[RMDB]
RNA sequence: GGGAACGACUCGAGUAGAGUCGAAAAGUUCAGUCGUUCGCGACUGAACAAACUGUGAAGCGCGAAAACACAGAAAACAAACGCCAACGCGCGUAUCGCCGAAAACCCUGCAGUUCGCUGCAGGGAACAAGUGCUCUAACUUCGGUUAGAGCACUUGAAAAGAAACAACAACAACAAC
Reactivity to 2A3 in 0.01 (KOAc 150mM, MgCl2 10mM, bicine 150mM(pH8.5), 24C), signal-to-noise 2, nucleotides 027 to 126: g010u000u000c000a000g020u010c000g040u010u090c170g010c000g070a000c000u000g000a000a000c000a000a010a000c010u020g000u000g030a080a020g020c030g000c020g130a050a070a120a030c020a010c000a030g120a060a110a010a020c050a050a100a020c020g030c040c010a190a130c120g120c010g010c010g010u010a060u200c050g030c050c000g080a030a040a060a110c000c020c030u000g010c000a010g000u030u060c220g010c130u000g010c010a000g030g000g000a000a000
Reactivity to DMS in 0.01 (KOAc 150mM, MgCl2 10mM, bicine 150mM(pH8.5), 24C), signal-to-noise 1, nucleotides 027 to 126: g020u010u010c000a010g010u030c000g020u000u020c150g040c020g000a040c000u000g010a000a000c010a060a100a180c010u000g000u000g030a020a100g000c090g000c030g010a040a140a100a100c010a010c020a020g000a060a020a060a050c140a110a030a070c080g000c030c100a060a110c200g040c080g010c020g020u030a080u020c080g030c060c190g000a030a060a070a090c010c000c030u000g000c000a000g030u000u020c160g010c020u000g000c020a010g000g020g000a000a040

Chemical mapping of a 177-nucleotide RNA with 2A3 and DMS. 2A3 adducts were read by reverse transcription with SuperScript II with manganese. The reactions ran in a buffer of 150 mM KOAc, 10 mM MgCl2 and 150 mM bicine (pH 8.5), at 24 C. The 2A3 profile rests on 1,479 reads. The data come from the RNA Mapping Database (RMDB), library M2PK50. Values cover nucleotides 27 to 126.